[RMDB]
RNA sequence: GGGAACGACUCGAGUAGAGUCGAAAACGCGCGGAGGGUCAUGAAACACGGAAUCGUGCGCAUUCUAGUCUGUGGGAUGCGUGCUAAAUUAAAGCAGAAUCGCCAUGUCGUCAUCCUGUCUGUCGGAGGGCGGUGCGGUUAAAGCCAAAAGACAAACGACUCGAUUAGACUUCGGUCUAAUCGAGUCAAAAGAAACAACAACAACAAC
Reactivity to 2A3 in 0.01 (KOAc 150mM, MgCl2 10mM, bicine 150mM(pH8.5), 24C), signal-to-noise 1, nucleotides 027 to 156: c010g050c000g030c050g070g020a040g000g010g000u070c030a050u090g060a070a160a020c130a010c100g120g120a050a070u120c030g010u000g000c000g000c000a000u000u000c000u010a110g050u030c010u040g090u070g060g000g000a000u000g000c020g030u010g000c000u030a000a100a140u150u200a080a050a000g020c000a000g050a040a020u040c010g020c020c030a080u110g030u020c000g060u020c000a020u020c020c010u040g010u120c020u010g050u040c020g020g000a020g000g000g000c040g000g000u000g000c030g010g000u020u000a010a030a000g050c050c030a030a040a000a000g030a030c000a050a030a000c030
The record gives the reactivity of an RNA of 207 nucleotides to 2A3. For 2A3 the reverse transcriptase was SuperScript II with manganese. Reactivities are given for positions 27 through 156. Conditions: 150 mM KOAc, 10 mM MgCl2 and 150 mM bicine (pH 8.5), 24 C.